Background
This 177-nucleotide RNA was probed chemically with 2A3 and DMS. For DMS, 800 sequencing reads were counted. The 2A3 profile rests on 864 reads. 2A3 adducts were read by reverse transcription with SuperScript II with manganese. The reactions ran in a buffer of 150 mM KOAc, 10 mM MgCl2 and 150 mM bicine (pH 8.5), at 24 C. Reactivities are given for positions 27 through 126.

[RMDB]
RNA sequence: GGGAACGACUCGAGUAGAGUCGAAAAAAAGGACCUGAAAUCCGAUAUCUCUAUUUUGUUAAAAAUCUUAACAACCUUCAUCGCGGGCAAGUGUUAGGGCACAUUGCUGCGACUGUUAGAUUGCAAGGUCUAUUGAUUUCUUCGGAAAUCAAUAGACAAAAGAAACAACAACAACAAC
Reactivity to 2A3 in 0.01 (KOAc 150mM, MgCl2 10mM, bicine 150mM(pH8.5), 24C), signal-to-noise 1, nucleotides 027 to 126: a000a000a030g030g020a030c020c040u080g070a100a000a000u000c000c000g010a010u040a120u120c000u000c020u010a180u190u090u070u020g030u060u050a040a140a070a000a000u000c020u070u070a020a020c020a010a080c010c060u090u040c020a030u030c000g000c060g050g050g000c020a030a000g000u000g030u070u110a120g070g100g060c000a020c050a110u010u010g030c000u000g010c000g000a000c000u020g030u010u030a020g000a020u020u080g080c060a080a000g140
Reactivity to DMS in 0.01 (KOAc 150mM, MgCl2 10mM, bicine 150mM(pH8.5), 24C), signal-to-noise 1, nucleotides 027 to 126: a040a030a300g010g020a020c010c020u000g000a060a110a300u000c020c050g010a200u000a080u000c010u000c010u010a140u000u000u000u000g000u000u000a020a120a060a020a090u020c040u010u020a050a070c010a020a020c050c000u000u010c070a180u000c020g000c010g010g000g010c000a000a000g010u000g000u000u000a090g000g010g010c010a000c000a130u000u000g020c000u010g020c000g010a030c300u020g010u000u000a010g000a020u000u010g030c060a070a000g010